[RMDB]
This 177-nucleotide RNA was probed chemically with 2A3 and DMS.
The DMS profile rests on 1,943 reads.
The reactions ran in a buffer of 150 mM KOAc, 10 mM MgCl2 and 150 mM bicine (pH 8.5), at 24 C.
It was measured as part of the RMDB library OK2TRN.
2A3 adducts were read by reverse transcription with SuperScript II with manganese.
The 2A3 profile rests on 985 reads.
RNA sequence: GGGAACGACUCGAGUAGAGUCGAAAAAACGCGGGCCUCUUCGACUGCAUCCUGCCGGUGCUGGACGCGCGCGCCGGCGCGCCGGUCGAGGGCGACGGCGGCCGCUUCUUUGCCGCGCUGGCGCUGCGAGUCUAGAACCAUUCGUGGUUCUAGACUCAAAAGAAACAACAACAACAAC
Reactivity to 2A3 in 0.01 (KOAc 150mM, MgCl2 10mM, bicine 150mM(pH8.5), 24C), signal-to-noise 1, nucleotides 027 to 126: a000a000c100g020c050g020g020g050c000c050u060c060u180u130c060g030a030c010u000g020c000a050u040c000c020u030g070c020c000g000g050u060g020c020u150g100g020a110c060g060c010g030c020g040c030g000c170c000g010g030c000g000c060g040c090c010g000g050u060c020g010a050g030g010g030c010g000a010c010g000g040c050g000g010c020c000g080c020u200u030c020u240u250u190g080c030c010g000c010g000c020u030g000g050c070g010c060u110g050c040
Reactivity to DMS in 0.01 (KOAc 150mM, MgCl2 10mM, bicine 150mM(pH8.5), 24C), signal-to-noise 1, nucleotides 027 to 126: a050a060c090g000c020g000g000g030c020c020u000c050u020u000c040g000a110c020u000g000c110a170u000c040c040u000g010c030c000g030g000u000g000c020u010g020g020a070c130g040c100g010c150g000c040g010c030c010g000g010c010g020c120g030c160c000g020g000u010c030g000a070g000g000g010c020g000a040c040g000g020c050g000g000c020c050g000c140u010u000c090u000u010u000g020c050c010g020c020g020c010u000g000g010c020g010c000u000g010c140